RNA sequence: GGGAACGACUCGAGUAGAGUCGAAAAUACAGGAUGUGCCCAUAAUAAAUUUCCGUUUCCGUGUAGCAAUGGUUACUGGAACGUCGCCCUGAUUGUUAAAAUCGUGUCACCGUUCGCGGUGACACGAGUAUUGUUCAUCCUUCGGGAUGAACAAUACAAAAGAAACAACAACAACAAC
Reactivity to DMS in 0.01 (KOAc 150mM, MgCl2 10mM, bicine 150mM(pH8.5), 24C), signal-to-noise 3, nucleotides 027 to 126: u000a120c050a050g000g010a050u000g010u010g020c020c000c040a090u010a070a150u020a040a080a110u000u020u000c050c000g010u010u000u010c010c010g000u000g010u000a100g020c130a180a060u010g010g010u000u000a030c030u000g020g000a020a030c120g020u000c120g030c040c000c000u010g000a090u010u000g000u010u000a060a070a080a220u000c010g000u010g000u000c000a010c000c010g030u000u020c220g020c030g020g000u000g000a010c000a000c000g000a000
Reactivity to 2A3 in 0.01 (KOAc 150mM, MgCl2 10mM, bicine 150mM(pH8.5), 24C), signal-to-noise 3, nucleotides 027 to 126: u110a010c010a020g060g000a090u060g050u070g110c010c000c010a040u130a110a070u100a020a090a040u110u090u030c040c010g000u030u090u000c020c080g060u040g020u060a030g010c080a130a270u120g170g010u010u010a030c050u080g000g000a020a010c020g020u000c050g050c000c000c010u100g080a210u160u100g100u130u150a020a090a060a130u040c000g000u000g000u010c000a010c000c020g010u060u060c180g020c010g130g030u010g000a010c000a000c000g000a000